[RMDB]
RNA sequence: GGGAACGACUCGAGUAGAGUCGAAAAGAUAUGGAGUGGUCUAUCUGGCAUCGAUCUCGGAAACGAGGGAGCCAAAUAGAGCCACUCCUAAGUCAAACCUAUAAGCAUGUUCGCAUGCUUAUAGGAAGUAGUUCAUCUGGUUCGCCAGAUGAACUACAAAAGAAACAACAACAACAAC
Reactivity to 2A3 in 0.01 (KOAc 150mM, MgCl2 10mM, bicine 150mM(pH8.5), 24C), signal-to-noise 1, nucleotides 027 to 126: g010a030u050a060u170g000g000a010g000u010g000g050u020c000u000a020u000c010u000g020g000c030a240u300c220g020a120u010c000u000c000g020g080a070a040a040c010g010a030g000g000g040a000g000c020c000a000a000a000u020a010g020a080g030c020c000a000c000u020c000c000u000a000a000g000u000c010a050a080a070c000c000u000a000u000a010a000g000c010a010u040g060u080u270c300g000c220a010u010g010c000u000u000a000u010a010g000g010a020a030
Reactivity to DMS in 0.01 (KOAc 150mM, MgCl2 10mM, bicine 150mM(pH8.5), 24C), signal-to-noise 1, nucleotides 027 to 126: g010a000u000a300u000g020g000a040g030u000g000g000u000c000u000a000u000c030u000g010g000c000a300u010c140g000a070u020c010u000c010g000g000a200a160a150c010g000a010g010g000g000a020g000c010c000a000a000a000u000a000g000a130g000c000c000a000c000u000c000c020u000a020a060g010u000c020a070a060a190c010c000u000a000u000a000a000g000c000a000u000g000u010u010c180g020c010a000u000g000c000u000u030a000u010a010g010g020a000a050